[RMDB]
RNA sequence: GGGAACGACUCGAGUAGAGUCGAAAACGUGCCGUCUGCGUCCCACGGGAGAGGCCUCGGCUUCCAGACGCGUCGGAGGACGUGUCCCGCGCUGUCCUGAGGCUGGGGAGGAGAUGGAGCCUUGGCCGCGCAUCUACAGGUUCGCCUGUAGAUGCGCAAAAGAAACAACAACAACAAC
Reactivity to 2A3 in 0.01 (KOAc 150mM, MgCl2 10mM, bicine 150mM(pH8.5), 24C), signal-to-noise 2, nucleotides 027 to 126: c030g040u080g030c020c020g040u030c030u070g070c000g130u070c020c050c020a040c070g040g080g010a130g030a010g070g000c030c020u020c010g030g000c040u100u020c030c000a040g030a030c010g020c010g000u040c020g040g200a230g140g070a020c020g050u040g040u060c000c040c000g020c030g000c030u100g090u260c000c060u130g050a030g040g000c020u070g060g010g000g000a040g060g040a070g030a050u090g010g000a010g020c020c000u040u010g050g010c060c040
Reactivity to DMS in 0.01 (KOAc 150mM, MgCl2 10mM, bicine 150mM(pH8.5), 24C), signal-to-noise 1, nucleotides 027 to 126: c150g010u010g000c020c070g000u000c010u010g010c070g000u010c010c040c070a100c170g020g010g000a090g000a080g010g000c010c000u010c120g020g000c010u020u000c020c030a100g010a040c000g000c020g010u000c050g030g030a140g000g000a020c020g000u010g000u010c000c070c040g050c170g020c040u010g000u020c050c010u020g000a090g010g000c050u010g010g000g010g000a160g000g000a060g000a130u000g000g000a090g000c020c040u000u000g000g010c040c090
Conditions: 150 mM KOAc, 10 mM MgCl2 and 150 mM bicine (pH 8.5), 24 C. Structure probing data (2A3 and DMS) for a 177-nucleotide construct. The 2A3 profile rests on 2,460 reads. Source: RMDB library OK2TST, as collected in RNAgym.